[RMDB]
RNA sequence: GGGAACGACUCGAGUAGAGUCGAAAAAUACUCGCAUAUUGCUGAUGCUCAUCUUCAUAUCUAUCAUUAAUAUCUUCUAUUUCAUCAAUGAUCUCAUUAUAUGCAUCGACUACUUUUUUUAAUUUACUGGUGUUAUCAAUUUCGAUUGAUAACACCAAAAAGAAACAACAACAACAAC
Reactivity to 2A3 in 0.01 (KOAc 150mM, MgCl2 10mM, bicine 150mM(pH8.5), 24C), signal-to-noise 2, nucleotides 027 to 126: a000u060a040c000u000c030g080c060a040u080a090u160u210g030c050u070g000a010u030g000c010u010c000a010u010c030u060u010c010a020u000a030u050c010u070a060u020c030a040u030u110a120a050u060a130u160c090u150u010c040u070a100u060u050u090c020a080u000c010a020a120u070g030a020u030c020u000c030a030u080u170a050u010a020u100g040c010a040u020c020g110a020c030u150a130c030u090u020u010u020u060u070u300a180a140u240u030u000a110c140
Reactivity to DMS in 0.01 (KOAc 150mM, MgCl2 10mM, bicine 150mM(pH8.5), 24C), signal-to-noise 1, nucleotides 027 to 126: a070u000a070c030u000c050g020c060a070u000a050u000u000g020c060u000g010a060u010g010c030u000c080a050u010c090u000u010c040a030u010a040u020c030u010a130u000c020a050u000u010a070a040u010a090u010c050u000u000c100u010a100u000u010u000c070a060u010c080a060a060u000g020a000u000c040u000c000a060u010u000a090u000a030u010g010c090a070u000c080g020a090c060u000a060c030u020u000u010u000u000u000u010a100a100u000u000u000a040c170